[RMDB]
RNA sequence: GGGAACGACUCGAGUAGAGUCGAAAAGAUCGCUUACAGCUUCAUGCCAAAACUGCCUUCAAGGUGGACAUCACCUACGACAUUGUAAUGCCGAUCGCUUUCGUAUUUAUGGAAGUAAGCACAUCAACCAUCAUGAGUGGUUCGCCACUCAUGAUGGAAAAGAAACAACAACAACAAC
Reactivity to 2A3 in 0.01 (KOAc 150mM, MgCl2 10mM, bicine 150mM(pH8.5), 24C), signal-to-noise 8, nucleotides 027 to 126: g010a040u070c030g010c020u020u050a010c010a030g010c020u070u120c050a050u100g070c020c010a020a030a060a080c060u100g060c020c020u190u200c080a130a060g010g020u040g020g060a130c030a210u200c020a060c010c020u070a040c060g090a020c030a070u060u140g030u070a060a010u070g110c090c030g020a030u010c030g000c010u000u010u020c030g080u070a290u090u300u080a060u200g010g020a010a030g010u050a040a040g100c030a040c020a150u070c070a080a090
Reactivity to DMS in 0.01 (KOAc 150mM, MgCl2 10mM, bicine 150mM(pH8.5), 24C), signal-to-noise 2, nucleotides 027 to 126: g000a130u000c040g040c030u000u010a060c000a090g030c010u130u000c030a110u070g000c070c110a050a060a070a140c040u070g060c000c020u000u050c150a210a060g010g010u000g000g020a100c220a120u000c040a010c000c060u020a060c130g000a020c080a070u000u000g000u000a000a010u050g040c000c000g000a020u000c010g000c010u000u000u000c030g020u000a080u030u080u060a000u000g000g000a030a040g000u000a090a110g010c060a120c110a080u010c080a100a120